[RMDB]
RNA sequence: GGGAACGACUCGAGUAGAGUCGAAAAGUCGACGUUCGCGUCGACAAAAAAGAUAUGGACUGUUGUAUGCUUUUGACGGCUUAAGUAUCGGAAACGAUACUAUAGCCGAUAAGCAUACACCAGUCCUAAGUCAAAAAGGACUACUUCGGUAGUCCAAGUAGAAGGCUUGGUUCGCCAAGCCUUCUACAAAAGAAACAACAACAACAAC
Reactivity to 2A3 in 0.01 (KOAc 150mM, MgCl2 10mM, bicine 150mM(pH8.5), 24C), signal-to-noise 2, nucleotides 027 to 156: g000u000c000g010a000c060g030u060u180c300g000c070g090u000c000g000a000c000a000a000a000a030a000a030g010a000u030a020u040g000g000a000c000u000g010u000u000g000u000a000u030g010c000u000u060u130u260g180a140c020g000g030c020u060u100a210a020g000u010a000u010c000g000g010a140a050a040c010g000a000u000a000c010u030a020u080a000g000c010c000g010a000u000a000a000g000c000a000u000a010c000a000c000c000a000g000u020c000c000u000a000a000g000u020c030a000a000a110a040a040g000g000a000c000u010a000c000u080u040c220g130g000u000a000g000u000c040c000a010a010

The record gives the reactivity of an RNA of 207 nucleotides to 2A3. Conditions: 150 mM KOAc, 10 mM MgCl2 and 150 mM bicine (pH 8.5), 24 C. For 2A3 the reverse transcriptase was SuperScript II with manganese. Values cover nucleotides 27 to 156. The 2A3 profile rests on 1,283 reads. Source: RMDB library RNAMAK, as collected in RNAgym.